The record gives the reactivity of an RNA of 177 nucleotides to 2A3 and DMS. Reactivities are given for positions 27 through 126. DMS (dimethyl sulfate) methylates the pairing face of unpaired adenines and cytosines. For 2A3, 1,580 sequencing reads were counted. It was measured as part of the RMDB library TTRDEL.
RNA sequence: GGGAACGACUCGAGUAGAGUCGAAAAGAUAUGGACAUGACCCGGAGAUGUGUGUGCGUUGAAAUCGGAAACGAUGGAGCACAUGCGCUCCGCAUGUCCUAAGUCAAAACGGUUCUUCGGAACCGAACAUUUUUCCCACGUUCGCGUGGGAAAAAUGAAAAGAAACAACAACAACAAC
Reactivity to 2A3 in 0.01 (KOAc 150mM, MgCl2 10mM, bicine 150mM(pH8.5), 24C), signal-to-noise 1, nucleotides 027 to 126: g020a020u030a050u110g030g000a010c010a020u080g160a210c080c080c100g060g040a060g060a240u100g030u000g000u030g010u020g000c140g160u300u100g060a020a030a000u010c000g000g080a120a000a020c000g030a010u000g070g010a020g000c010a010c010a000u000g000c050g000c000u010c000c000g010c000a010u000g010u000c010c000u000a110a010g070u010c060a000a000a120a140c000g000g020u000u040c000u040u060c280g110g030a000a000c000c010g020a040a000
Reactivity to DMS in 0.01 (KOAc 150mM, MgCl2 10mM, bicine 150mM(pH8.5), 24C), signal-to-noise 1, nucleotides 027 to 126: g010a050u000a300u000g000g000a000c000a030u020g010a190c180c220c040g020g030a020g000a080u030g070u000g030u010g010u000g000c000g000u000u000g000a060a100a020u000c000g000g000a150a040a170c000g010a000u000g010g000a090g000c000a000c030a010u000g030c010g000c000u000c000c010g030c040a020u000g000u000c020c000u000a020a080g030u020c030a030a070a090a140c010g000g010u000u000c000u000u000c090g040g020a010a000c020c020g020a060a070